RNA sequence: GGGAACGACUCGAGUAGAGUCGAAAAACUUUUAGCGAUUAUCGUUAUAGUAAUGUCCUUGGCAUAUCGCUAUGCACAGAGGUAUUAGUAGCGCAAUAGCUAUUGAAGGACAUUACCUCUCAAAUAAUGCCAUAUAUACAUUCGUGUAUAUAUGGCAAAAAGAAACAACAACAACAAC
Reactivity to 2A3 in 0.01 (KOAc 150mM, MgCl2 10mM, bicine 150mM(pH8.5), 24C), signal-to-noise 2, nucleotides 027 to 126: a050c040u180u130u040u080a020g030c040g000a060u090u170a070u300c000g010u020u070a080u070a080g000u000a020a000u000g000u060c000c000u020u020g040g000c070a030u020a030u300c040g000c020u000a000u060g040c040a030c030a090g230a060g130g180u180a190u130u140a150g030u010a040g000c020g010c050a090a110u020a020g020c020u050a040u040u220g050a030a000g000g000a000c000a000u000u000a000c000c000u020c030u040c000a080a170a090u160a110a050
Reactivity to DMS in 0.01 (KOAc 150mM, MgCl2 10mM, bicine 150mM(pH8.5), 24C), signal-to-noise 6, nucleotides 027 to 126: a070c110u000u010u000u000a020g010c000g020a150u010u010a090u010c080g010u010u010a060u010a090g010u000a020a010u000g000u000c000c000u000u000g000g020c040a030u000a020u000c060g030c030u000a010u000g010c090a100c130a120g000a100g000g010u000a070u010u010a080g010u000a020g010c020g010c200a080a050u000a110g000c000u010a050u000u010g010a050a010g000g010a020c010a010u000u000a010c010c120u000c040u000c050a050a060a080u010a070a130